[RMDB]
RNA sequence: GGGAACGACUCGAGUAGAGUCGAAAAAAGGUGCCAUCAUAACGGUUAAGAACUCUUAACUCUGAUGGCUUUCGAGUUAUGUGGUGCAUUGAAGCUCUCCCUUCAAAUGGUCGUACAGUUCCGUGAACCGUUUUUCGUGAUUCGUCACGAAAAACGGAAAAGAAACAACAACAACAAC
Reactivity to DMS in 0.01 (KOAc 150mM, MgCl2 10mM, bicine 150mM(pH8.5), 24C), signal-to-noise 1, nucleotides 027 to 126: a090a040g000g000u000g040c000c000a050u010c000a040u000a080a010c220g000g030u000u000a040a000g000a190a160c300u000c030u000u000a010a000c030u000c090u020g020a010u000g040g000c040u000u010u000c010g010a100g000u000u040a010u020g000u000g040g010u000g000c010a060u000u010g010a080a090g000c160u000c040u000c060c070c000u000u000c050a080a050a120u000g000g000u010c000g010u000a090c000a070g000u000u000c000c030g000u010g000a030a290
Notes:
The record gives the reactivity of an RNA of 177 nucleotides to DMS. In probing experiments dimethyl sulfate is read out at A N1 and C N3, which are open when not base-paired. For DMS, 681 sequencing reads were counted. Values cover nucleotides 27 to 126.